About this RNA: This 177-nucleotide RNA was probed chemically with 2A3 and DMS. For DMS the reverse transcriptase was MarathonRT. The data come from the RNA Mapping Database (RMDB), library TTRINS. The DMS profile rests on 2,780 reads.
RNA sequence: GGGAACGACUCGAGUAGAGUCGAAAAGAUAUGGAGCUGAACUACGCUUUGAGGGUCGUUGAAAUUACUCUGCUCGGAAACGAGCAGAGUAAUGGAGACCCAAGAUGAGAGCGCAGCUCCUAAGUCACAACUACAUUUGGUUCGCCAAAUGUAGUUGAAAAGAAACAACAACAACAAC
Reactivity to 2A3 in 0.01 (KOAc 150mM, MgCl2 10mM, bicine 150mM(pH8.5), 24C), signal-to-noise 2, nucleotides 027 to 126: g060a010u100a100u200g020g020a000g030c000u010g020a140a100c100u210a060c290g020c000u050u050u100g110a130g000g000g010u010c000g140u140u140g050a080a080a000u000u010a000c000u000c000u000g010c020u000c010g030g040a070a130a050c020g000a020g000c000a000g000a000g010u000a010a000u000g000g000a010g000a000c010c000c010a010a000g060a040u250g070a040g000a010g030c020g000c010a000g000c000u000c020c000u000a030a000g020u000c000a000
Reactivity to DMS in 0.01 (KOAc 150mM, MgCl2 10mM, bicine 150mM(pH8.5), 24C), signal-to-noise 3, nucleotides 027 to 126: g010a030u000a300u000g000g000a020g030c010u000g000a120a080c120u010a180c070g010c020u010u010u010g020a300g010g000g040u000c000g020u000u020g000a250a120a030u000u000a010c000u000c000u010g000c000u000c000g000g020a070a080a220c000g000a000g020c000a000g010a010g010u000a000a000u010g000g000a130g000a010c010c010c010a020a040g000a090u000g010a090g000a060g000c300g010c010a010g000c010u000c000c000u010a010a060g000u000c030a290